Structure probing data (DMS and 2A3) for a 177-nucleotide construct. For 2A3 the reverse transcriptase was SuperScript II with manganese.
RNA sequence: GGGAACGACUCGAGUAGAGUCGAAAAGUAAGCAAAGACGUAAUAACCGUCAUGGUGAGUAAAGUGAGCGCAUGCCGUAAGAAAUGCAAACGCGUUAUGAUUCAGAACACUUGGUGCGCUAUUAUAACGGUAAUACCUCAUUCGUGAGGUAUUACCGAAAAGAAACAACAACAACAAC
Reactivity to DMS in 0.01 (KOAc 150mM, MgCl2 10mM, bicine 150mM(pH8.5), 24C), signal-to-noise 5, nucleotides 027 to 126: g030u010a040a060g010c070a070a120a120g010a080c080g010u000a070a050u000a100a090c200c010g020u010c030a080u010g010g020u000g000a140g000u010a020a050a050g020u010g000a060g000c160g010c050a040u000g020c260c110g000u000a090a070g000a050a100a060u010g020c030a050a160a120c150g010c030g000u000u010a040u010g010a080u000u000c150a060g010a090a110c060a030c040u000u010g020g000u000g020c150g000c040u000a010u000u000a030u000a080a120
Reactivity to 2A3 in 0.01 (KOAc 150mM, MgCl2 10mM, bicine 150mM(pH8.5), 24C), signal-to-noise 3, nucleotides 027 to 126: g040u030a060a010g050c030a050a060a080g020a010c020g030u060a070a100u090a130a110c040c000g040u020c040a030u050g050g030u040g020a040g030u070a030a100a050g070u090g060a010g000c020g000c040a010u060g010c000c000g000u030a020a020g040a110a130a020u070g020c020a070a160a000c030g000c010g030u000u040a060u090g100a080u070u120c040a060g060a160a010c040a000c060u050u050g060g010u040g030c020g000c070u000a010u140u070a080u040a070a000
It was measured as part of the RMDB library OK2TRN.